[RMDB]
Chemical mapping of a 207-nucleotide RNA with 2A3. Values cover nucleotides 27 to 156. The reactions ran in a buffer of 150 mM KOAc, 10 mM MgCl2 and 150 mM bicine (pH 8.5), at 24 C.
RNA sequence: GGGAACGACUCGAGUAGAGUCGAAAAGGUAAAAGCGAAUCGGGGAAGAUAAGCUAGCAGCAAAAAGGAACCGAUUCCCACCAAGUUCGGAAAGAGAUACCGGGCGAGGCGCUGAAGAAAGAAUCUCAAACUCCCGCAAGUUUCGACUUGCGGGAAAGUACAGAUGAGGGUUCGCCCUCAUCUGUACAAAAGAAACAACAACAACAAC
Reactivity to 2A3 in 0.01 (KOAc 150mM, MgCl2 10mM, bicine 150mM(pH8.5), 24C), signal-to-noise 1, nucleotides 027 to 156: g090g000u040a000a100a020a020g020c010g040a020a000u020c020g010g000g030g040a000a060g050a180u090a090a070g030c040u050a040g130c080a020g000c020a020a090a040a030a090g150g010a030a010c010c010g010a030u000u000c020c000c000a030c000c010a010a010g030u010u050c000g010g000a110a060a020g010a030g000a000u030a070c000c010g000g000g010c000g010a020g020g000c000g000c080u030g030a040a010g030a050a150a000g040a040a040u000c010u020c060a040a100a150c040u000c000c000c000g000c000a000a000g000u020u090u220c070g040a030c020u020u000g010c000g000g010g000a000a000a000